Conditions: 150 mM KOAc, 10 mM MgCl2 and 150 mM bicine (pH 8.5), 24 C.
An RNA of 177 nucleotides, treated with DMS and 2A3 and read out base by base.
Reactivities are given for positions 27 through 126.
For DMS, 1,780 sequencing reads were counted.
The 2A3 profile rests on 1,674 reads.
Source: RMDB library OK2TRN, as collected in RNAgym.
[RMDB]
RNA sequence: GGGAACGACUCGAGUAGAGUCGAAAAUUGAUUAAAGCUUGUGAAACAUGCCACAACAAUGACUCUAUAUUAAACUUAGCAAGUUUAAGGAAUGUUCUUAGCAGGACAUAUGCCACAUUUGGGAGGACUAGAUGGAGAUGUUCGCAUCUCCAUCUAGAAAAGAAACAACAACAACAAC
Reactivity to DMS in 0.01 (KOAc 150mM, MgCl2 10mM, bicine 150mM(pH8.5), 24C), signal-to-noise 3, nucleotides 027 to 126: u010u020g000a120u000u000a090a150a100g000c060u000u020g030u000g000a170a130a240c040a050u000g000c020c030a130c090a050a060c040a090a050u010g000a030c020u010c020u010a130u000a080u010u000a010a010a000c020u000u000a100g000c150a120a090g000u000u000u000a030a040g000g010a090a050u010g000u000u000c020u000u010a120g030c260a070g020g010a040c080a010u000a030u000g020c020c040a060c110a080u000u000u000g010g010g000a070g010g010a120
Reactivity to 2A3 in 0.01 (KOAc 150mM, MgCl2 10mM, bicine 150mM(pH8.5), 24C), signal-to-noise 2, nucleotides 027 to 126: u050u030g040a030u060u080a100a110a010g040c050u030u040g030u030g230a230a020a080c020a030u030g020c020c020a060c010a110a000c020a020a080u050g040a030c010u000c000u030a040u000a040u140u080a080a030a020c020u000u020a020g050c040a080a020g010u000u010u010a040a000g040g010a070a040u060g020u020u030c010u010u040a060g070c070a020g020g000a030c010a000u120a040u100g050c000c000a030c030a140u060u060u100g100g010g010a060g000g010a050